Structure probing data (DMS and 2A3) for a 207-nucleotide construct. For 2A3 the reverse transcriptase was SuperScript II with manganese.

RNA sequence: GGGAACGACUCGAGUAGAGUCGAAAAGCUUAAUAACCUGCGCUGAGCCCUUCUCCCCCAGCUUGCCUGUGUCCUAGGGAAUUGGAAGGUCAUCCUUCGCAGGAUCGUGUGGAAGUCCUGCUCGGGGUCCAAACAUGGUAAUUCGUUACCAUGUUAACGCCAAUACACUAUUCGUAGUGUAUUGGCGAAAAGAAACAACAACAACAAC
Reactivity to DMS in 0.01 (KOAc 150mM, MgCl2 10mM, bicine 150mM(pH8.5), 24C), signal-to-noise 2, nucleotides 027 to 156: g030c060u000u000a040a110u000a080a130c020c020u020g010c130g030c060u010g020a090g020c060c020c020u010u010c010u010c040c020c000c030c070a120g000c050u000u000g000c070c040u000g040u000g010u010c050c020u010a120g040g010g010a090a150u000u010g010g020a030a050g030g000u000c020a050u000c030c010u010u010c070g000c020a050g040g020a040u000c060g030u000g020u010g020g010a170a120g010u000c000c000u000g020c010u000c040g010g010g010g010u000c010c040a110a020a020c010a000u000g040g020u000a010a050u000u000c300g020u000u000a010c000c010a010u000g010u010u000a020a110
Reactivity to 2A3 in 0.01 (KOAc 150mM, MgCl2 10mM, bicine 150mM(pH8.5), 24C), signal-to-noise 3, nucleotides 027 to 156: g020c030u130u140a080a020u120a200a190c000c000u030g000c050g000c030u080g040a050g020c000c010c000u050u080c110u150c030c000c000c050c000a000g000c010u040u100g050c020c020u070g020u020g050u060c000c020u040a050g000g030g040a060a050u090u060g040g040a030a020g010g020u080c010a080u080c030c010u050u050c030g000c010a000g030g000a020u090c060g050u100g030u020g150g030a050a020g040u010c000c000u010g010c000u010c020g000g020g030g030u000c010c040a000a010a030c000a000u000g030g000u020a020a020u020u030c060g020u050u000a000c000c000a000u000g020u020u030a060a000
Annotation:
The DMS profile rests on 3,545 reads.